This 207-nucleotide RNA was probed chemically with DMS and 2A3. The 2A3 profile rests on 2,878 reads. The reactions ran in a buffer of 150 mM KOAc, 10 mM MgCl2 and 150 mM bicine (pH 8.5), at 24 C.
[RMDB]
RNA sequence: GGGAACGACUCGAGUAGAGUCGAAAAGCAAGCCGGCGCUGCGGGUCGCGAUCACCAACCAGCGCACCGGCGAACGGAUCUCCAUCCGCGGUGAACUCCUCGACAUCAUCGACACCGCCCGGGACCGGUUGAACCGAGAGGACUGGGACCGAUGAUCAUAUCCUAUACCGUUCGCGGUAUAGGAUAUAAAAGAAACAACAACAACAAC
Reactivity to DMS in 0.01 (KOAc 150mM, MgCl2 10mM, bicine 150mM(pH8.5), 24C), signal-to-noise 3, nucleotides 027 to 156: g010c020a090a300g000c020c010g000g000c010g070c010u000g080c010g020g030g000u000c080g040c050g020a190u000c080a110c130c030a080a040c040c000a040g010c010g030c030a030c010c010g030g030c000g000a030a010c040g010g000a100u000c090u010c090c010a130u000c020c020g040c000g000g000u010g000a140a090c070u000c020c010u000c030g010a130c120a130u000c050a080u000c020g000a120c020a170c040c040g050c000c040c050g000g000g000a070c000c010g000g010u000u000g000a200a190c000c010g010a120g010a150g000g010a140c100u000g000g030g000a140c080c020g020a050u010g010a080u000c060
Reactivity to 2A3 in 0.01 (KOAc 150mM, MgCl2 10mM, bicine 150mM(pH8.5), 24C), signal-to-noise 4, nucleotides 027 to 156: g050c050a050a020g000c000c010g000g000c010g000c020u040g020c110g070g000g030u080c080g040c100g220a190u180c040a020c050c010a090a110c030c010a000g000c020g000c030a020c030c020g000g000c030g010a050a010c020g010g010a050u070c080u010c130c040a050u030c030c020g000c030g010g010u040g060a100a060c050u060c050c010u020c040g030a040c020a130u090c010a020u040c030g010a020c050a030c090c020g020c010c020c000g020g000g040a070c020c010g000g050u020u190g080a100a070c020c030g030a060g010a050g150g000a020c040u030g010g000g000a010c010c020g040a070u080g010a010u080c040